[RMDB]
An RNA of 177 nucleotides, treated with 2A3 and DMS and read out base by base. The data come from the RNA Mapping Database (RMDB), libraries RFM100 and RFMREP.
RNA sequence: GGGAACGACUCGAGUAGAGUCGAAAACAAUCUCUUUAAUGAUUGCUUUUGGCAUGCUGAUUGCCAUGUUGUCAGAGAACAAAGAAAAAUAGACCGCCCCUUGAGCCUGGAAAGUGAUAGGGAGUGGUUCUACGUCUCAGUUCGCUGAGACGUAGAAAAAAGAAACAACAACAACAAC
Reactivity to 2A3 in 0.01 (KOAc 150mM, MgCl2 10mM, bicine 150mM(pH8.5), 24C), signal-to-noise 2, nucleotides 027 to 126: c010a000a080u040c020u010c020u070u190u150a140a120u200g030a030u050u100g090c000u130u110u090u160g020g020c000a050u040g020c050u150g190a200u120u000g050c000c030a020u060g030u010u000g060u010c010a000g040a070g040a110a000c040a110a060a020g150a110a140a050a020a010u110a040g000a000c000c000g000c000c000c000c000u030u000g020a030g050c020c000u090g090g230a280a090a000g060u120g020a000u000a010g020g000g020a140g040u000g000g010
Reactivity to DMS in 0.01 (KOAc 150mM, MgCl2 10mM, bicine 150mM(pH8.5), 24C), signal-to-noise 4, nucleotides 027 to 126: c030a040a010u000c010u010c210u020u050u010a120a110u020g010a010u000u000g000c120u000u010u010u000g030g010c000a010u000g010c170u030g000a100u000u000g020c030c020a130u020g000u000u010g010u000c010a050g000a190g000a140a060c080a030a060a130g000a020a060a050a090a110u000a130g000a080c000c010g010c000c000c000c000u010u020g010a300g010c030c000u010g020g010a140a060a110g000u000g000a140u000a010g000g000g000a110g050u000g010g010